An RNA of 177 nucleotides, treated with DMS and 2A3 and read out base by base. Reactivities are given for positions 27 through 126.
[RMDB]
RNA sequence: GGGAACGACUCGAGUAGAGUCGAAAAUUAGUGCUGCUUCUUUGGAACCUGCGUUUAAGGCUUCUGCGCAUGCGUCGUUAGAAUUCUGGCACCCUCCUCUAGCACUUCGACCGUCGAUCUGGAAUUCAAAGACGUUAUACUUCGGUAUAACGUCUUUAAAAGAAACAACAACAACAAC
Reactivity to DMS in 0.01 (KOAc 150mM, MgCl2 10mM, bicine 150mM(pH8.5), 24C), signal-to-noise 5, nucleotides 027 to 126: u000u010a080g020u000g010c040u000g020c070u010u000c040u010u010u000g010g010a080a100c060c020u010g010c080g020u000u000u010a090a100g010g000c090u000u000c040u000g010c050g010c050a080u010g020c100g000u000c050g000u000u000a060g010a060a080u000u010c050u010g010g020c070a100c060c040c020u000c030c020u010c060u010a080g010c070a060c050u000u000c050g000a100c060c060g020u000c040g000a070u000c030u010g010g010a080a130u000u000c110
Reactivity to 2A3 in 0.01 (KOAc 150mM, MgCl2 10mM, bicine 150mM(pH8.5), 24C), signal-to-noise 1, nucleotides 027 to 126: u100u050a020g080u010g120c020u000g020c010u020u030c010u000u140u130g040g000a050a020c000c010u010g020c070g080u080u060u080a060a010g040g000c030u110u060c020u020g000c010g010c020a030u100g120c060g060u070c030g040u050u060a000g000a060a050u080u080c040u160g050g000c020a070c050c030c000u050c000c000u010c010u020a000g000c030a010c000u100u080c030g050a030c000c030g080u020c010g020a060u030c000u020g090g070a050a050u090u000c000

For 2A3, 1,118 sequencing reads were counted. It was measured as part of the RMDB library OK2TRN.